RNA sequence: GGGAACGACUCGAGUAGAGUCGAAAAAUGGCGAAUGCAUGGGGAACUACAUCUGCGUCGCGAGUUCGAUUCUCGCCAGGGCCUGGUCCUGUAGCUCAGUUGGUAGAGCAAGCUGUUCCCCGGACACAAAAUCCAGCUAGGUUCGCCUAGCUGGAAAUCUCGAUUAAAUGUUCGCAUUUAAUCGAGAAAAAGAAACAACAACAACAAC
Reactivity to DMS in 0.01 (KOAc 150mM, MgCl2 10mM, bicine 150mM(pH8.5), 24C), signal-to-noise 2, nucleotides 027 to 156: a080u000g010g020c020g020a120a030u000g010c040a080u010g020g010g000g020a030a090c010u020a020c040a050u000c040u000g030c070g030u000c030g000c020g010a060g010u020u000c020g020a300u010u000c010u000c010g040c050c010a170g000g040g000c020c080u000g040g020u020c020c000u020g020u000a080g000c000u010c000a110g010u010u000g010g000u000a070g000a090g000c020a200a100g000c050u000g020u000u000c000c000c020c020g010g000a080c060a080c060a060a020a110a090u000c020c000a070g030c000u000a000g020g020u000u010c270g050c000c000u000a010g010c010u000g000g000a000a020a010
Reactivity to 2A3 in 0.01 (KOAc 150mM, MgCl2 10mM, bicine 150mM(pH8.5), 24C), signal-to-noise 3, nucleotides 027 to 156: a000u120g100g010c060g080a150a030u170g050c100a070u140g010g000g000g020a010a000c010u070a030c070a140u090c030u050g030c050g060u070c010g010c010g000a000g000u000u010c010g010a010u020u000c000u000c000g000c000c000a000g010g010g020c030c260u160g070g040u050c010c000u000g000u020a020g010c000u000c010a060g030u180u160g120g100u180a010g000a000g000c000a000a000g030c030u030g010u010u010c000c000c010c000g000g010a020c020a000c030a020a110a020a030u020c000c000a000g000c000u000a000g000g020u020u010c020g060c050c000u000a000g010c000u000g000g000a010a010a010